[RMDB]
RNA sequence: GGGAACGACUCGAGUAGAGUCGAAAAUCUGAAUCCUUCGGGAUUCAGAAAAGGGGGAGGGCCCGCCGGAACCGCUAUACAGGUGGAGGUUCCAAACCACCCAAAGGACUAACUUCGGUUAGUCCAACUCAUGAAGAUACUUCGGUAUCUUCAUGAGAAAAGAAACAACAACAACAAC
Reactivity to DMS in 0.01 (KOAc 150mM, MgCl2 10mM, bicine 150mM(pH8.5), 24C), signal-to-noise 3, nucleotides 027 to 126: u010c000u020g010a000a010u010c000c000u000u020c210g050g010g010a000u000u000c000a010g010a010a040a080a120g010g020g020g010g000a200g000g010g000c140c010c020g000c100c040g000g020a050a030c010c010g000c040u000a080u000a130c270a100g020g020u000g010g010a060g000g000u000u000c020c000a020a080a090c040c010a210c010c010c040a050a060a120g010g010a020c000u000a000a010c000u000u010c180g000g010u010u000a000g010u000c000c000a030a030
Reactivity to 2A3 in 0.01 (KOAc 150mM, MgCl2 10mM, bicine 150mM(pH8.5), 24C), signal-to-noise 2, nucleotides 027 to 126: u000c010u010g000a000a000u010c000c010u020u020c080g100g000g000a000u010u010c010a000g000a010a020a010a000g040g000g000g000g000a120g020g020g010c160c000c000g020c000c000g000g030a050a020c020c020g000c080u100a080u060a210c120a090g010g190u080g040g110a110g040g000u130u010c010c000a000a000a010c000c000a030c010c010c010a060a050a020g000g000a000c000u000a010a000c010u040u100c300g050g000u000u000a000g000u000c000c010a000a010